[RMDB]
RNA sequence: GGGAACGACUCGAGUAGAGUCGAAAACGAGAAGAACACCAAGCAGGUCAUCAAGACCUGGUCGCGUCGGUCGACCAUCAUUCCGGACUUCAUCGGCCAUACCUUUGCGGUGCACGACGGCCGCAAGGCAAGGUACCCUCUUCGGAGGGUACCUUGCAAAAGAAACAACAACAACAAC
Reactivity to 2A3 in 0.01 (KOAc 150mM, MgCl2 10mM, bicine 150mM(pH8.5), 24C), signal-to-noise 2, nucleotides 027 to 126: c020g000a000g020a050a000g030a070a040c100a030c090c020a040a010g050c030a010g030g000u030c000a080u130c060a120a200g010a000c000c000u010g010g010u020c000g010c000g020u050c040g010g100u170c010g000a020c030c010a030u090c020a070u160u160c040c070g000g060a070c050u030u040c000a270u020c010g050g000c000c020a090u090a080c040c010u050u040u040g000c010g000g040u060g020c070a080c220g110a020c050g030g000c020c000g000c010a000a010g060
Reactivity to DMS in 0.01 (KOAc 150mM, MgCl2 10mM, bicine 150mM(pH8.5), 24C), signal-to-noise 1, nucleotides 027 to 126: c030g000a050g020a010a000g010a050a120c100a100c050c090a060a120g060c170a020g000g000u000c040a090u010c250a140a080g000a010c000c020u000g010g000u000c010g010c000g010u000c030g000g000u000c020g000a060c050c060a080u000c160a120u020u020c050c080g000g000a100c030u000u000c030a120u040c020g000g000c030c060a050u000a140c100c030u000u000u000g000c000g040g000u000g010c030a190c040g010a020c010g000g000c000c000g000c020a000a010g020

Record summary:
Source: RMDB library OK2TRN, as collected in RNAgym. This 177-nucleotide RNA was probed chemically with 2A3 and DMS. Conditions: 150 mM KOAc, 10 mM MgCl2 and 150 mM bicine (pH 8.5), 24 C. For 2A3, 1,851 sequencing reads were counted.